[RMDB]
Structure probing data (DMS and 2A3) for a 177-nucleotide construct. It was measured as part of the RMDB library VIROID. The 2A3 profile rests on 8,449 reads. For DMS the reverse transcriptase was MarathonRT.

RNA sequence: GGGAACGACUCGAGUAGAGUCGAAAAGAGAUCGCGGCUGGGGCUUAGGACCCCACUCCUGCGAGACAGGAGUAAUCCUAAACAGGGUUUUCACCCUUCCUUUAGUUUCCUUCCUCUCCUGGAGAGGGUGUUAAGGAUAGUUCGCUAUCCUUAACACAAAAGAAACAACAACAACAAC
Reactivity to DMS in 0.01 (KOAc 150mM, MgCl2 10mM, bicine 150mM(pH8.5), 24C), signal-to-noise 5, nucleotides 027 to 126: g020a120g000a060u000c030g010c050g010g040c300u010g010g000g000g010c050u000u010a070g030g010a130c020c020c020c030a020c020u010c040c000u000g010c010g010a110g010a160c060a000g000g000a030g010u000a130a070u000c060c010u010a030a040a110c210a050g000g000g000u000u010u010u010c160a120c020c000c010u000u020c040c010u010u010u000a090g010u000u000u000c030c030u010u000c020c000u000c010u000c020c140u010g000g000a030g010a040g010g000
Reactivity to 2A3 in 0.01 (KOAc 150mM, MgCl2 10mM, bicine 150mM(pH8.5), 24C), signal-to-noise 5, nucleotides 027 to 126: g070a000g010a030u060c030g000c010g090g020c050u040g030g010g010g000c000u040u070a040g050g050a100c000c000c000c000a010c000u000c000c000u010g010c080g160a110g040a030c020a000g000g010a000g000u020a010a040u010c010c000u020a030a020a030c180a050g030g010g030u050u050u210u260c100a060c000c010c000u040u060c040c000u080u120u040a050g010u020u040u010c010c000u050u080c050c000u010c000u010c040c150u140g060g020a020g000a000g010g020